Source: RMDB library OK2TRN, as collected in RNAgym. This 177-nucleotide RNA was probed chemically with DMS and 2A3. DMS adducts were read by reverse transcription with MarathonRT. Conditions: 150 mM KOAc, 10 mM MgCl2 and 150 mM bicine (pH 8.5), 24 C. 2A3 adducts were read by reverse transcription with SuperScript II with manganese.
[RMDB]
RNA sequence: GGGAACGACUCGAGUAGAGUCGAAAAGACUCUUACAAAGGGAAAGUUGUAGGAGUAUGGUUCUUACUUUCCCACUAUUGGACAUUUAAGAACCGAAGUUGCUAUUGCGUCCAAUAGAUGGCAACUGGCAGAGCACGCUAUUCGUAGUGUGUUCUGCAAAAGAAACAACAACAACAAC
Reactivity to DMS in 0.01 (KOAc 150mM, MgCl2 10mM, bicine 150mM(pH8.5), 24C), signal-to-noise 9, nucleotides 027 to 126: g000a060c000u000c000u000u000a010c000a010a030a110g010g020g010a100a100a130g010u000u000g010u000a010g000g010a020g010u000a050u010g010g010u000u000c020u000u000a080c230u000u000u000c010c000c030a280c160u000a050u000u000g000g000a030c030a160u010u010u000a050a050g000a030a030c040c030g010a090a040g010u000u000g000c000u000a050u000u000g010c120g000u000c010c010a030a040u000a080g010a040u000g000g000c010a010a010c020u000g010
Reactivity to 2A3 in 0.01 (KOAc 150mM, MgCl2 10mM, bicine 150mM(pH8.5), 24C), signal-to-noise 9, nucleotides 027 to 126: g020a000c000u000c000u000u010a000c010a010a030a020g170g070g070a110a120a050g050u010u010g010u010a000g000g030a010g000u040a090u130g050g010u050u020c010u050u030a070c020u030u030u020c000c020c010a020c020u050a080u030u070g010g010a000c020a040u120u130u110a100a040g020a040a000c010c010g010a070a010g010u010u010g000c010u020a030u110u160g060c050g020u010c010c000a010a010u080a060g070a030u020g000g000c000a010a010c020u020g080